RNA sequence: GGGAACGACUCGAGUAGAGUCGAAAACGCAGAGGGUUCUGAUAACAAAGAACCUAGAUAGCCGCAUCGGUAUUAUAUGAUGUAGUCGGUGAGCCGGAAUGCCUGCAUCGUAAGCCUAUAAGUAAAUUUAAGUGUAAUCACUUCGGUGAUUACACAACAAAAUGUGGGAGUUCGCUCCCACAUUUUGAAAAGAAACAACAACAACAAC
Reactivity to 2A3 in 0.01 (KOAc 150mM, MgCl2 10mM, bicine 150mM(pH8.5), 24C), signal-to-noise 2, nucleotides 027 to 156: c030g000c020a030g020a090g100g010g030u000u000c000u040g130a120u140a280a070c070a040a190a040g000a000a000c010c010u010a010g010a060u130a020g060c080c060g030c060a040u040c020g000g000u120a070u300u090a090u060a040u160g040a010u010g000u010a040g040u040c020g030g000u100g080a050g060c040c040g000g000a100a020u120g020c010c000u000g000c010a010u000c000g040u020a090a000g000c010c020u120a090u070a250a110g030u070a100a100a300u070u150u120a140a030g000u000g000u010a000a000u000c000a000c010u050u060c180g030g000u000g000a000u000u000a000c000a000c000a000a020
Reactivity to DMS in 0.01 (KOAc 150mM, MgCl2 10mM, bicine 150mM(pH8.5), 24C), signal-to-noise 1, nucleotides 027 to 156: c080g040c030a140g000a200g040g030g070u000u000c000u000g010a240u020a270a220c300a130a200a040g040a010a000c010c000u050a030g000a210u000a090g020c010c110g000c050a070u000c020g000g020u000a100u000u000a080u010a070u000g010a010u000g010u000a080g010u000c040g030g050u000g000a090g050c070c020g000g120a080a120u010g030c080c000u000g040c020a040u000c040g000u000a020a030g010c000c030u000a100u040a040a190g000u000a060a120a100u000u000u000a020a220g000u000g000u000a010a040u000c000a000c000u000u000c300g040g000u000g020a010u000u000a000c010a010c000a030a110